[RMDB]
RNA sequence: GGGAACGACUCGAGUAGAGUCGAAAAACGUCAUCCUUGACUGGGUUCCGGGUCAUUUCCCCAGUGAUGAGCAUGGUUUAUCGACGUUCGAUGGAACCGCAUUAUAUGAAUAUGCCGAUCCGCGUGAUGUGUUAACUCUGUUCGCAGAGUUAACACAAAAAGAAACAACAACAACAAC
Reactivity to 2A3 in 0.01 (KOAc 150mM, MgCl2 10mM, bicine 150mM(pH8.5), 24C), signal-to-noise 1, nucleotides 027 to 126: a000c010g030u020c010a060u050c040c000u060u090g070a040c040u040g000g000g120u090u080c070c000g040g010g000u040c030a070u070u070u060c010c000c050c000a040g050u050g050a080u030g070a030g080c040a050u070g040g030u030u060u080a060u030c030g070a090c140g100u150u120c010g040a030u030g080g030a000a010c010c020g000c010a060u090u060a070u030a070u170g070a080a020u150a030u130g050c020c020g030a040u000c020c010g030c020g020u010g060a110
Reactivity to DMS in 0.01 (KOAc 150mM, MgCl2 10mM, bicine 150mM(pH8.5), 24C), signal-to-noise 4, nucleotides 027 to 126: a080c140g020u000c060a070u000c100c080u000u000g020a060c050u000g000g020g000u000u000c050c020g020g000g020u000c040a110u000u000u000c020c010c010c110a100g000u010g000a030u000g010a100g010c080a080u010g010g010u000u000u000a040u000c030g020a150c240g020u010u010c010g020a090u010g000g020a020a040c050c040g000c050a030u010u000a090u000a130u010g010a060a090u010a060u000g010c020c040g010a060u000c020c020g010c120g020u000g010a130

Chemical mapping of a 177-nucleotide RNA with 2A3 and DMS. Reactivities are given for positions 27 through 126. 2A3 adducts were read by reverse transcription with SuperScript II with manganese. The DMS profile rests on 4,477 reads. The reactions ran in a buffer of 150 mM KOAc, 10 mM MgCl2 and 150 mM bicine (pH 8.5), at 24 C.